RNA sequence: GGGAACGACUCGAGUAGAGUCGAAAAGAUAUGGAACCAUUAGGGAGGGUGUCGGAAACGACACCCCGACGAUCUAAGGUUCCUAAGUCAAAACCAUUUCCGUCUUGUUCGCAAGACGGAAAUGGAAGAGAUAUUUAGGGUUCGCCCUAAAUAUCUCAAAAGAAACAACAACAACAAC
Reactivity to DMS in 0.01 (KOAc 150mM, MgCl2 10mM, bicine 150mM(pH8.5), 24C), signal-to-noise 4, nucleotides 027 to 126: g000a050u000a300u010g000g000a020a000c010c000a100u000u000a080g000g010g010a230g000g000g020u000g000u000c000g020g000a070a080a220c010g000a010c020a010c020c000c010c040g000a250c140g020a090u000c300u000a030a040g010g000u010u000c000c010u000a030a080g010u000c020a080a080a120a140c000c000a010u000u000u000c000c000g000u000c000u000u000g010u010u020c180g010c010a010a000g000a010c000g000g000a010a000a000u010g000g000a020a030
Reactivity to 2A3 in 0.01 (KOAc 150mM, MgCl2 10mM, bicine 150mM(pH8.5), 24C), signal-to-noise 3, nucleotides 027 to 126: g020a000u070a040u150g000g010a010a010c060c070a300u000u070a060g030g030g020a130g020g000g000u010g000u000c000g020g020a050a050a070c020g000a000c000a010c020c010c000c010g000a020c010g010a010u060c020u080a050a030g000g000u010u000c000c000u000a140a010g050u010c030a000a020a070a130c000c000a010u000u000u000c000c000g000u000c000u010u040g030u080u080c280g020c170a000a000g000a010c000g000g000a010a000a000u010g000g000a010a010

The record gives the reactivity of an RNA of 177 nucleotides to DMS and 2A3. The DMS profile rests on 3,792 reads. Source: RMDB library TTRDEL, as collected in RNAgym. For DMS the reverse transcriptase was MarathonRT.